[RMDB]
Conditions: 150 mM KOAc, 10 mM MgCl2 and 150 mM bicine (pH 8.5), 24 C.
An RNA of 207 nucleotides, treated with 2A3 and read out base by base.
For 2A3 the reverse transcriptase was SuperScript II with manganese.
It was measured as part of the RMDB library M2RFPK.
RNA sequence: GGGAACGACUCGAGUAGAGUCGAAAAACGCACCAUACGUGAUGCGAGAACUACAGUUCCGCUCCUCUAGCACACAGAGGUCAAUUGGGUGCGACCCCCCCCUCUCCCGUGGGUCAACGGGAACCAAAAAAGACCCUUUAGUUCGCUAAAGGGUCAAGCACCUAAAUCAGUUCGCUGAUUUAGGUGCAAAAGAAACAACAACAACAAC
Reactivity to 2A3 in 0.01 (KOAc 150mM, MgCl2 10mM, bicine 150mM(pH8.5), 24C), signal-to-noise 2, nucleotides 027 to 156: a000c010g010c020a010c000c010a020u090a140c150g040u080g140a060u200g060c040g030a280g030a160a030c040u210a140c150a110g020u000u000c010c000g000c010u100c000c020u060c010u020a100g080c070a030c030a020c010a160g010a020g000g000u020c010a030a070u100u200g110g010g000u000g020c000g000a060c000c000c000c000c000c000c000c000u000c010u020c000c000c010g000u000g000g000g060u130c080a020a020c010g000g000g040a000a010c020c010a000a000a060a090a040a050g010a020c000c000c000u000u000u000a030g010u050u010c130g020c140u010a000a000a000g000g000g000u000c000a000a000